[RMDB]
RNA sequence: GGGAACGACUCGAGUAGAGUCGAAAAAGAGGCGAUACUUCGCCUCAAGCUUGGUGCUUAGCUUCUUUCACCAAGCAUAUUACACGCGGAUAACCGCCAAAGGAGAAACACUGACUACGGUCAGUGAGGAAGUUGGUUCGGUUCGCCGAACCAACAACCUCCACAUGUGGUUCGCCACAUGUGGAGGAAAAGAAACAACAACAACAAC
Reactivity to 2A3 in 0.01 (KOAc 150mM, MgCl2 10mM, bicine 150mM(pH8.5), 24C), signal-to-noise 1, nucleotides 027 to 156: a000g030a000g000g070c050g000a010u080a170c200u010u000c050g000c000c000u020c000a000a010g000c000u000u040g010g000u020g000c090u050u000a040g010c000u060u050c000u000u000u020c000a000c010c000a020a000g000c020a000u050a040u100u090a020c060a000c010g040c000g030g000a070u030a280a300c000c000g010c010c000a050a020a000g060g000a010g000a010a140a000c000a010c000u000g020a000c000u040a000c100g110g000u040c000a000g010u040g010a010g020g060a180a040g010u010u010g000g000u000u000c000g010g050u030u030c120g060c060c000g030a000a000c000c010a000a000c010a000a000
Description: Chemical mapping of a 207-nucleotide RNA with 2A3. Reactivities are rounded to 0.1 and cut off at 0 and 3. The reactions ran in a buffer of 150 mM KOAc, 10 mM MgCl2 and 150 mM bicine (pH 8.5), at 24 C. It was measured as part of the RMDB library M2RFPK.